Structure probing data (DMS and 2A3) for a 177-nucleotide construct. Reactivities are given for positions 27 through 126. Source: RMDB library VIROID, as collected in RNAgym. DMS adducts were read by reverse transcription with MarathonRT.

RNA sequence: GGGAACGACUCGAGUAGAGUCGAAAACGGGCGAUGCCGAAUCAAUGGCGGCCUAGGCCUUGCACCUCUAUCCGGUGUCAAAGCAAUGGCGCAGACCUCAGGCACCGAGUGUGUAUCGGAGCGUGUGCUGCUUUUAUAAGUUCGCUUAUAAAAGCAGAAAAGAAACAACAACAACAAC
Reactivity to DMS in 0.01 (KOAc 150mM, MgCl2 10mM, bicine 150mM(pH8.5), 24C), signal-to-noise 9, nucleotides 027 to 126: c100g000g000g010c010g010a100u010g010c010c000g010a120a130u010c220a100a100u010g010g020c020g010g000c000c030u000a090g010g000c010c010u000u010g010c020a030c010c010u000c060u000a090u010c090c060g000g000u000g010u000c020a060a120a100g000c030a080a070u010g010g000c020g000c120a110g010a130c030c010u010c060a070g000g010c010a020c010c000g010a060g010u000g010u010g020u000a080u010c120g010g000a040g010c140g010u000g010u000g010
Reactivity to 2A3 in 0.01 (KOAc 150mM, MgCl2 10mM, bicine 150mM(pH8.5), 24C), signal-to-noise 7, nucleotides 027 to 126: c040g000g030g000c040g220a240u150g000c020c010g050a040a130u210c110a090a160u220g050g000c000g010g030c010c000u030a070g080g010c000c000u000u040g010c000a010c010c000u010c020u070a100u080c030c010g000g010u010g020u030c030a050a010a010g010c020a020a070u300g020g000c160g000c170a050g040a210c000c010u030c040a000g000g010c000a000c010c010g020a120g050u140g020u050g030u070a100u150c080g030g010a020g020c080g010u030g020u030g030
For DMS, 17,922 sequencing reads were counted.